[RMDB]
RNA sequence: GGGAACGACUCGAGUAGAGUCGAAAAUCAACUAUACAACACAUCUAGGUGUGUGUCUCAUAUUUUAUCUAGCUGUGUUAACUGGUUAUAGUGUGAGUGUGUGUAUGCUUGUGUGUGUGUCCAGCUGAACUAUUGACCCAUUCGUGGGUCAAUAGUUAAAAGAAACAACAACAACAAC
Reactivity to 2A3 in 0.01 (KOAc 150mM, MgCl2 10mM, bicine 150mM(pH8.5), 24C), signal-to-noise 1, nucleotides 027 to 126: u030c000a000a050c010u040a050u020a100c060a080a040c020a000c000a010u000c010u020a070g000g000u010g030u020g000u020g130u080c030u070c150a150u070a140u080u290u130u110a010u010c000u030a030g050c020u000g060u000g030u000u020a020a040c060u070g050g000u110u060a040u030a110g140u150g050u040g040a050g040u040g000u000g020u000g000u000a010u080g000c030u200u030g040u010g000u000g020u000g010u020g020u130c010c000a040g030c100u030g040
Reactivity to DMS in 0.01 (KOAc 150mM, MgCl2 10mM, bicine 150mM(pH8.5), 24C), signal-to-noise 5, nucleotides 027 to 126: u000c060a080a060c050u010a050u000a060c120a080a020c010a010c010a010u000c020u000a030g010g030u000g010u000g010u000g000u010c130u000c080a060u000a060u000u010u000u010a020u010c010u000a020g010c060u000g000u000g000u000u010a070a150c230u000g000g000u000u000a050u000a030g020u000g020u000g000a060g020u000g020u000g010u000g020u010a050u000g000c060u000u010g010u000g000u000g030u000g000u000g000u000c040c040a090g010c110u000g000
Record summary:
This 177-nucleotide RNA was probed chemically with 2A3 and DMS. The RNA was probed in 150 mM KOAc, 10 mM MgCl2 and 150 mM bicine (pH 8.5) at 24 C. The data come from the RNA Mapping Database (RMDB), library OK2TRN. Reactivities are given for positions 27 through 126. For 2A3, 1,079 sequencing reads were counted.